[RMDB]
RNA sequence: GGGAACGACUCGAGUAGAGUCGAAAAGACGCCUGAUGGCGAACGUGCGCAAGAUAAGAAUGGUGGUAUAUACUGCCGAGAAUAACUAAUGGACGGCAGAGCGCACGCACCACCAAAGUCCACCAGAAUCCACGGUCGUAUUCGUACGACCGUGGAUAAAAGAAACAACAACAACAAC
Reactivity to DMS in 0.01 (KOAc 150mM, MgCl2 10mM, bicine 150mM(pH8.5), 24C), signal-to-noise 1, nucleotides 027 to 126: g000a190c000g000c000c000u120g000a050u130g000g000c010g030a130a210c000g050u000g010c100g000c010a300a010g050a040u040a090a170g000a080a100u040g000g120u000g000g000u000a130u010a070u000a170c000u000g000c000c000g000a140g110a240a040u000a190a190c240u040a000a170u000g000g000a240c000g000g000c000a040g000a270g000c000g000c000a000c000g000c300a000c000c010a140c050c060a060a120a030g000u000c010c010a140c030c000a130g000a090
Reactivity to 2A3 in 0.01 (KOAc 150mM, MgCl2 10mM, bicine 150mM(pH8.5), 24C), signal-to-noise 1, nucleotides 027 to 126: g030a000c030g000c000c020u300g100a130u300g000g000c000g000a030a060c000g090u040g000c000g000c000a020a010g120a300u150a130a150g220a120a000u030g000g010u110g000g000u010a160u000a000u060a110c000u000g000c030c030g000a000g040a120a020u300a000a000c090u090a000a180u180g250g100a000c000g000g000c000a000g000a000g000c000g030c000a000c000g000c000a000c000c000a010c000c000a010a000a000g030u020c020c000a000c000c000a050g090a030